[RMDB]
RNA sequence: GGGAACGACUCGAGUAGAGUCGAAAAUACGUACAUGUGUGUAUCAUAUGUAUUACAUGCAUAUGAUAUAUAUAUAUCAAUCAUAUAUUUUUAAGCCUCAGCUGAGUACGAUGCAGAGGAAAGACACCAAAUUCCAAGGUCUCCAGGACCACUGGCAGACCUCAAUAACAUUCGUGUUAUUGAGGUCAAAAGAAACAACAACAACAAC
Reactivity to 2A3 in 0.01 (KOAc 150mM, MgCl2 10mM, bicine 150mM(pH8.5), 24C), signal-to-noise 2, nucleotides 027 to 156: u200a030c040g010u030a030c030a040u050g020u000g000u000g000u050a000u000c000a000u010a020u000g040u030a090u060u270a150c080a110u190g000c000a000u010a020u000g000a000u000a000u010a000u000a000u010a010u060a010u130c020a000a250u120c000a030u200a100u060a300u300u120u040u140u180a100a060g020c010c000u000c020a080g000c010u010g030a030g030u010a010c000g000a010u080g000c010a000g000a000g020g020a070a170a000g050a000c130a050c080c000a030a080a190u110u010c070c010a070a040g040g000u000c020u040c050c030a050g080g040a130c000c020a070c110u000g030g000c020a010
Source: RMDB library OK3TST, as collected in RNAgym. Chemical mapping of a 207-nucleotide RNA with 2A3. The RNA was probed in 150 mM KOAc, 10 mM MgCl2 and 150 mM bicine (pH 8.5) at 24 C. Reactivities are given for positions 27 through 156.